[RMDB]
RNA sequence: GGGAACGACUCGAGUAGAGUCGAAAACGGAAUUCGACAGGUUAUUACAAGCAUGGAUUGCGUUCCCGUUUGUCGGGUUAAAGACUGCAGAUAUAACUGCAAAAAAUAAUGAACCAUCUUACGCAUUAGCUGCCUAAUCGCAGUAGCGUAGCCCUUUAUUUAGUUUUAACUUCGGUUAAAACUAAAUAAAAGAAACAACAACAACAAC
Reactivity to 2A3 in 0.01 (KOAc 150mM, MgCl2 10mM, bicine 150mM(pH8.5), 24C), signal-to-noise 4, nucleotides 027 to 156: c030g040g040a020a030u060u050c030g060a020c050a090g120g060u150u140a130u170u160a130c080a150a060g070c050a060u110g030g050a060u070u080g060c000g020u000u030c020c000c010g000u050u120u070g070u050c020g010g020g030u030u120a040a130a020g060a040c040u020g000c000a000g080a030u090a000u040a270a070c000u000g000c000a070a010a030a040a000a030u250a030a070u090g060a030a050c030c010a040u060c030u090u040a010c000g000c010a090u040u140a060g020c010u010g010c030c020u140a140a060u180c070g000c000a000g020u030a020g000c010g000u010a020g030c000c000c000u000u000u010
Reactivity to DMS in 0.01 (KOAc 150mM, MgCl2 10mM, bicine 150mM(pH8.5), 24C), signal-to-noise 1, nucleotides 027 to 156: c040g000g000a060a100u000u000c010g010a120c050a020g020g000u000u000a000u000u000a120c060a110a150g020c030a150u000g010g020a100u000u000g020c000g000u000u000c000c000c010g040u000u010u000g030u000c030g030g070g030u000u000a100a090a160g030a170c160u000g000c000a030g010a170u000a210u030a150a180c020u010g010c000a000a010a090a070a080a070u000a040a090u000g020a150a120c040c040a070u000c040u000u020a000c000g020c010a060u010u000a120g020c000u030g000c050c000u000a130a130u000c070g050c000a020g000u000a080g010c000g060u000a030g000c090c050c010u010u000u020